[RMDB]
RNA sequence: GGGAACGACUCGAGUAGAGUCGAAAAUCAAUCAUGUUCGCAUGAUUGAAAAGGUCAGGUGACCAAACCACGACACGCGUCGAAGCGACCGAGCCCGCAGGCAAAGUGCAAUCUUCGGAUUGCACAAGUCGAAUCGAAAGUUCGCUUUCGAUUCGACAAAAGAAACAACAACAACAAC
Reactivity to DMS in 0.01 (KOAc 150mM, MgCl2 10mM, bicine 150mM(pH8.5), 24C), signal-to-noise 1, nucleotides 027 to 126: u000c000a030a020u000c000a000u000g010u000u010c190g090c000a050u000g020a020u000u000g000a020a050a090a120g000g010u000c000a070g000g000u070g000a060c080c030a070a150a070c030c040a110c050g020a110c140a070c170g010c090g000u000c050g000a130a090g000c250g060a000c020c030g000a190g010c090c000c040g000c200a040g000g000c080a030a130a060g000u000g000c000a020a000u000c000u030u010c300g010g000a040u000u000g000c000a000c000a020a060
Reactivity to 2A3 in 0.01 (KOAc 150mM, MgCl2 10mM, bicine 150mM(pH8.5), 24C), signal-to-noise 1, nucleotides 027 to 126: u000c000a000a000u020c000a020u000g000u080u070c130g000c140a000u000g000a000u020u010g030a020a000a020a030g010g020u010c070a040g160g150u070g190a070c020c000a000a120a000c030c030a060c060g050a010c020a010c090g220c010g050u050c020g040a040a040g050c040g030a020c010c060g010a000g040c100c000c000g000c080a060g040g070c040a050a070a050g000u000g000c010a000a010u000c000u000u040c170g210g010a010u040u000g000c010a000c000a000a000